[RMDB]
RNA sequence: GGGAACGACUCGAGUAGAGUCGAAAAAUUGAGGGAUAAUACAGGCUCUCCCAUCCAACUCCUAUUCCAACACGUCCUCGUCGUACAGAGUGGUAACAUGUGUCACCACAUAUCCAAGCUCGGGUACAAAAGCCAACUACGUUCGCGUAGUUGGCAAGAUACGUGGAAGGUUCGCCUUCCACGUAUCAAAAGAAACAACAACAACAAC
Reactivity to 2A3 in 0.01 (KOAc 150mM, MgCl2 10mM, bicine 150mM(pH8.5), 24C), signal-to-noise 3, nucleotides 027 to 156: a000u100u150g000a070g040g030g010a040u050a140a070u130a260c110a130g040g070c010u020c000u010c000c000c000a040u060c040c000a060a030c030u000c000c010u070a120u130u040c040c030a070a030c030a040c100g020u010c010c010u030c020g060u020c050g000u020a020c040a030g070a020g030u070g010g070u100a080a040c040a100u100g060u040g110u150c040a020c060c000a010c010a030u060a030u020c020c030a050a030g010c010u000c040g100g020g000u020a070c030a040a070a010a000g000c000c000a010a000c000u000a000c000g040u030u040c170g000c000g120u000a000g000u000u000g000g010c010a000a010
Reactivity to DMS in 0.01 (KOAc 150mM, MgCl2 10mM, bicine 150mM(pH8.5), 24C), signal-to-noise 1, nucleotides 027 to 156: a210u000u030g010a100g020g020g010a090u000a050a180u010a090c110a180g040g000c100u010c030u000c010c020c000a070u010c080c030a110a090c030u010c030c020u000a060u020u020c010c030a090a080c080a030c060g010u000c010c000u000c060g000u010c040g000u000a140c090a180g050a150g030u010g010g040u010a040a030c020a150u000g010u010g020u000c030a040c050c000a060c050a110u000a040u000c000c020a000a190g030c000u000c010g040g010g050u000a080c060a080a040a060a180g020c000c000a020a000c010u000a030c010g000u010u000c300g010c010g010u000a010g010u000u000g010g030c000a000a000